[RMDB]
RNA sequence: GGGAACGACUCGAGUAGAGUCGAAAAUUCUUAUGGAGGGCUGAACAAGUCCGCCAUGACUUGCUGGUUUGGACUGUGAGAGUGGUGGUUGGGUGUCUCAAGUAUCCUCUGGGGGUGUCCGUGUCCGGUUCGCCCUAAAUUUCGAUUUAGGGCGAACAAAAGAAACAACAACAACAAC
Reactivity to DMS in 0.01 (KOAc 150mM, MgCl2 10mM, bicine 150mM(pH8.5), 24C), signal-to-noise 1, nucleotides 027 to 126: u000u020c020u000u000a080u040g000g000a060g050g000g000c000u000g000a110a060c150a120a050g020u000c000c010g000c010c010a000u000g000a020c160u030u000g010c030u000g010g000u000u040u030g010g000a040c040u000g000u000g000a030g000a140g010u010g000g010u010g000g010u000u020g010g020g010u050g000u010c060u000c030a050a160g010u030a060u010c010c060u030c040u000g010g000g000g010g000u000g000u020c040c020g010u030g030u000c000c110g000
Reactivity to 2A3 in 0.01 (KOAc 150mM, MgCl2 10mM, bicine 150mM(pH8.5), 24C), signal-to-noise 1, nucleotides 027 to 126: u050u000c000u010u080a040u000g000g000a040g000g000g000c000u050g010a100a020c100a130a000g000u030c000c010g000c000c000a000u090g110a070c010u000u110g000c010u110g000g070u120u080u100g140g020a040c010u000g000u080g090a060g000a000g040u040g000g000u010g000g130u000u070g020g000g000u040g010u020c020u000c020a140a000g020u040a060u140c000c000u000c070u050g000g000g000g080g080u010g020u060c000c000g070u040g020u000c040c010g040

Notes: Structure probing data (DMS and 2A3) for a 177-nucleotide construct. 2A3 adducts were read by reverse transcription with SuperScript II with manganese. Conditions: 150 mM KOAc, 10 mM MgCl2 and 150 mM bicine (pH 8.5), 24 C.